[RMDB]
RNA sequence: GGGAACGACUCGAGUAGAGUCGAAAAGAUAUGGAGAUAUGGAGGGAGGCUAGUAUCGGAAACGAUACAAAAGCCAUCGAUCUCCUGUAUCUCCUAAGUCAAAUCGGUCAUCUUCGGAUGACCGAAAGUAAUAAAUCGUGUUCGCACGAUUUAUUACAAAAGAAACAACAACAACAAC
Reactivity to 2A3 in 0.01 (KOAc 150mM, MgCl2 10mM, bicine 150mM(pH8.5), 24C), signal-to-noise 3, nucleotides 027 to 126: g000a000u010a000u060g000g000a010g000a000u020a040u150g020g000a020g010g020g000a030g000g000c000u020a020g010u000a000u000c000g000g010a010a000a010c000g000a010u000a010c010a020a220a000a010g020c020c010a070u270c020g010a020u000c010u000c000c000u020g020u020a020u010c000u000c000c000u000a010a000g000u000c030a030a020a260u060c000g000g000u010c000a000u010c000u060u070c300g200g000a000u000g000a010c000c000g000a010a000a000
Reactivity to DMS in 0.01 (KOAc 150mM, MgCl2 10mM, bicine 150mM(pH8.5), 24C), signal-to-noise 4, nucleotides 027 to 126: g010a010u000a040u010g000g000a000g030a000u010a010u000g010g010a020g010g010g010a030g030g020c010u000a300g000u000a000u000c000g010g000a010a010a030c000g000a010u000a010c000a020a090a130a070g020c000c000a240u000c210g000a020u000c000u000c000c000u010g030u010a000u000c000u000c000c000u000a010a070g010u000c010a070a120a250u000c000g010g000u000c000a010u000c000u000u010c270g010g000a010u000g000a000c000c000g000a000a020a060